[RMDB]
Structure probing data (DMS and 2A3) for a 177-nucleotide construct.
It was measured as part of the RMDB library OK2TST.
2A3 adducts were read by reverse transcription with SuperScript II with manganese.
The RNA was probed in 150 mM KOAc, 10 mM MgCl2 and 150 mM bicine (pH 8.5) at 24 C.
RNA sequence: GGGAACGACUCGAGUAGAGUCGAAAACUAAGUUCCACCAAGGAUGCUUGCUAGUAGUGUGUGUACCGGAAGCUGAGAUGGGUUGCGCAACGCUAGACAACACCCCAUCCAGUGCAGAAUUGCUGGGGUACGACUAGGUUUUCGAACCUAGUCGUACAAAAGAAACAACAACAACAAC
Reactivity to DMS in 0.01 (KOAc 150mM, MgCl2 10mM, bicine 150mM(pH8.5), 24C), signal-to-noise 3, nucleotides 027 to 126: c050u000a090a180g010u000u000c000c010a100c130c130a100a090g000g020a080u000g010c080u000u000g000c040u000a050g020u000a070g010u010g010u000g020u010g020u000a050c040c000g010g010a090a190g010c030u010g020a080g010a080u000g000g010g000u000u000g020c050g010c080a050a070c080g020c070u000a040g010a090c070a050a070c050a080c070c000c000c010a060u010c020c020a030g020u000g010c170a100g000a110a110u000u010g010c040u000g000g000g020
Reactivity to 2A3 in 0.01 (KOAc 150mM, MgCl2 10mM, bicine 150mM(pH8.5), 24C), signal-to-noise 3, nucleotides 027 to 126: c040u050a160a000g030u030u010c030c010a060c010c030a080a030g080g010a030u050g050c040u020u030g030c020u050a030g030u040a090g020u070g000u000g000u020g030u150a050c010c000g060g080a060a040g040c110u090g050a030g040a280u080g020g040g000u030u030g030c040g000c030a060a110c050g010c050u030a020g030a080c010a020a010c020a070c000c040c000c000a010u020c010c010a010g000u000g020c040a020g110a250a090u080u100g030c020u030g000g020g020